Background: This 177-nucleotide RNA was probed chemically with DMS and 2A3. For 2A3 the reverse transcriptase was SuperScript II with manganese. For 2A3, 4,199 sequencing reads were counted.

[RMDB]
RNA sequence: GGGAACGACUCGAGUAGAGUCGAAAACGAAGGACUUUCGAGUCCUUCGACUUAGCGAGAAAGAUCCUCGGUAUAAAUCUGGAACCCUUGGAAACAAGGGAAUGAACGGAAUCUUCGGAUUCCGUAACUGAGUAAAUCUGUUCGCAGAUUUACUCAGAAAAGAAACAACAACAACAAC
Reactivity to DMS in 0.01 (KOAc 150mM, MgCl2 10mM, bicine 150mM(pH8.5), 24C), signal-to-noise 3, nucleotides 027 to 126: c050g020a030a000g010g000a020c000u000u010u020c160g020a000g010u000c000c000u010u000c000g000a060c080u000u000a100g020c000g000a030g010a090a130a120g000a140u000c070c000u010c030g000g010u000a110u000a040a100a060u010c060u010g010g020a130a100c010c010c000u010u000g000g000a110a100a160c000a000a020g000g000g010a050a020u000g010a150a040c000g000g000a010a000u000c000u000u000c140g010g010a010u000u010c000c000g000u000a000a070
Reactivity to 2A3 in 0.01 (KOAc 150mM, MgCl2 10mM, bicine 150mM(pH8.5), 24C), signal-to-noise 3, nucleotides 027 to 126: c010g000a010a000g020g000a010c020u040u080u180c280g050a050g000u000c000c000u000u010c010g000a000c000u030u080a020g070c010g000a010g020a030a190a030g050a070u050c010c000u010c010g010g020u140a140u070a170a120a060u060c060u130g130g070a110a120c010c000c000u000u000g020g010a040a010a030c000a010a000g000g010g070a040a010u050g010a030a000c000g000g000a000a000u000c010u060u050c180g080g000a000u000u000c000c000g000u010a010a030
High 2A3 reactivity points to a flexible backbone, as in loops and unpaired stretches. Reactivities are given for positions 27 through 126. The reactions ran in a buffer of 150 mM KOAc, 10 mM MgCl2 and 150 mM bicine (pH 8.5), at 24 C.